[RMDB]
RNA sequence: GGGAACGACUCGAGUAGAGUCGAAAAUGUCUAGCGAACCCACAGCCAAGGGAACGGGCUUGGAAUAAUCAGCGGGGAAAGAAGACCCUGUUGAGCUUGACUCUAGUCUGACGUUGUGAAAUGACUUCCGAUUUAGACCUUUCGAGGUCUAAAUCGGAAAAGAAACAACAACAACAAC
Reactivity to 2A3 in 0.01 (KOAc 150mM, MgCl2 10mM, bicine 150mM(pH8.5), 24C), signal-to-noise 2, nucleotides 027 to 126: u070g000u070c040u030a000g000c010g030a130a120c010c000c050a070c040a020g000c000c010a170a130g250g090g000a010a180c020g000g060g050c000u000u000g000g100a060a000u130a110a050u110c020a000g010c000g000g000g020g030a050a300a050g300a030a080g040a110c000c000c000u000g000u000u000g000a000g000c000u030u000g000a010c000u010c020u080a100g060u060c010u000g010a060c040g000u000u000g000u010g020a150a110a060u070g000a030c000u000u010